[RMDB]
RNA sequence: GGGAACGACUCGAGUAGAGUCGAAAAAGAAUAUCCUUGGCAGUCAAACAGGCCUGUUGUGUCAGUAGAUAAAGGUGGUAUUUGGGAGCAGCUUCUGAAAGCUAAUAUUGGGCCUGAUAUGAAUUUGCAUUACAACUUGAACGGGAUCUACAACAGACUCGAUGGUAUUAUUCGUAAUACCAUCGAGAAAAGAAACAACAACAACAAC
Reactivity to 2A3 in 0.01 (KOAc 150mM, MgCl2 10mM, bicine 150mM(pH8.5), 24C), signal-to-noise 2, nucleotides 027 to 156: a000g080a050a010u070a020u050c010c010u020u030g020g000c010a010g020u120c030a030a040a180c000a020g000g000c020c030u030g030u100u030g020u010g000u030c030a010g020u040a040g050a120u100a060a180a040g000g000u010g010g000u090a080u100u120u080g040g000g000a030g010c010a020g000c010u060u070c000u080g090a140a070a000g020c030u050a000a080u090a150u080u110g040g020g000c000c000u030g030a000u000a010u100g040a060a060u040u080u060g000c000a000u040u070a050c040a160a070c080u060u110g030a050a010c000g040g000g050a010u050c000u080a090c010a080a000c010a050g080a140
Reactivity to DMS in 0.01 (KOAc 150mM, MgCl2 10mM, bicine 150mM(pH8.5), 24C), signal-to-noise 1, nucleotides 027 to 156: a090g020a160a140u000a060u000c010c050u000u000g010g030c050a110g000u000c080a120a080a190c040a110g020g000c010c040u010g020u000u000g030u000g010u000c040a080g030u000a070g010a080u010a070a060a080g010g040u000g020g030u010a040u000u000u010g010g000g010a160g000c010a080g000c010u010u000c040u000g000a110a040a150g020c020u010a100a090u010a160u010u010g000g010g020c010c010u000g020a060u000a090u000g020a090a100u000u000u010g050c040a080u000u020a070c050a070a100c070u000u000g020a120a130c120g090g000g030a090u000c040u000a070c030a070a050c060a180g010a170